[RMDB]
RNA sequence: GGGAACGACUCGAGUAGAGUCGAAAAGGGGCGUGAGCGCCUCAUCACCAGCGAGGCGCCGUUGGUGGACGCGGUCCUGGUCUCCGGCCAGCCCUCACUGGUGCCGGUGAUGGUCGCCGGCGCGGCCGUGGCCAGCCUGGGAGCGCUGCUGUCGCUGCGAAAAGUCGUUAUUCGUAACGACUUUUCGAAAAGAAACAACAACAACAAC
Reactivity to 2A3 in 0.01 (KOAc 150mM, MgCl2 10mM, bicine 150mM(pH8.5), 24C), signal-to-noise 1, nucleotides 027 to 156: g050g000g020g000c090g020u150g090a190g170c030g010c000c000u000c000a020u080c000a010c020c000a010g000c030g070a040g000g000c050g000c080c000g130u070u130g000g030u000g000g020a050c000g000c000g000g040u050c050c010u000g080g000u060c110u020c050c010g010g020c000c000a040g010c030c000c020u080c030a060c050u180g170g000u120g110c090c040g030g040u020g020a130u070g020g080u140c010g000c000c000g000g000c000g000c010g000g010c000c000g000u020g000g000c000c000a060g140c040c000u130g000g130g000a230g010c020g000c020u120g020c020u130g100u100c040g000c010u010g000
Structure probing data (2A3) for a 207-nucleotide construct. For 2A3 the reverse transcriptase was SuperScript II with manganese. It was measured as part of the RMDB library OK3TST. The 2A3 profile rests on 733 reads. The RNA was probed in 150 mM KOAc, 10 mM MgCl2 and 150 mM bicine (pH 8.5) at 24 C.